Overview
This 177-nucleotide RNA was probed chemically with 2A3 and DMS. The RNA was probed in 150 mM KOAc, 10 mM MgCl2 and 150 mM bicine (pH 8.5) at 24 C. The DMS profile rests on 987 reads. For DMS the reverse transcriptase was MarathonRT.
[RMDB]
RNA sequence: GGGAACGACUCGAGUAGAGUCGAAAAUCAAUCAUGUUCGCAUGAUUGAAAAGGUCAGGUGACCAUACCACGACACGCGUCGAAGCGACCGAGCCCGGAGGCAAAGUGCAAUCUUCGGAUUGCACAAGUCCUAACUUCGGUUCGCCGAAGUUAGGACAAAAGAAACAACAACAACAAC
Reactivity to 2A3 in 0.01 (KOAc 150mM, MgCl2 10mM, bicine 150mM(pH8.5), 24C), signal-to-noise 2, nucleotides 027 to 126: u010c000a000a010u000c000a000u010g030u050u030c130g000c070a010u000g010a010u010u000g000a010a020a010a020g020g030u030c040a020g000g230u090g140a100c010c000a050u120a050c010c000a030c040g010a020c040a050c120g150c070g050u070c010g060a060a010g090c070g070a010c010c000g010a030g110c020c030c000g000g070a050g030g020c030a050a070a020g000u000g000c000a000a000u000c010u000u050c180g130g000a020u020u010g000c000a000c010a010a020
Reactivity to DMS in 0.01 (KOAc 150mM, MgCl2 10mM, bicine 150mM(pH8.5), 24C), signal-to-noise 2, nucleotides 027 to 126: u000c000a010a010u000c010a010u000g010u000u010c220g030c000a010u000g000a030u000u000g000a010a050a160a050g010g010u000c000a090g010g000u000g020a060c090c140a110u000a060c050c020a130c040g010a050c080a060c210g030c150g010u000c000g030a180a090g000c130g000a040c050c000g000a090g000c010c000c030g000g000a090g000g040c070a010a120a140g020u000g000c000a010a010u000c000u000u040c170g000g000a010u000u000g000c000a000c000a040a100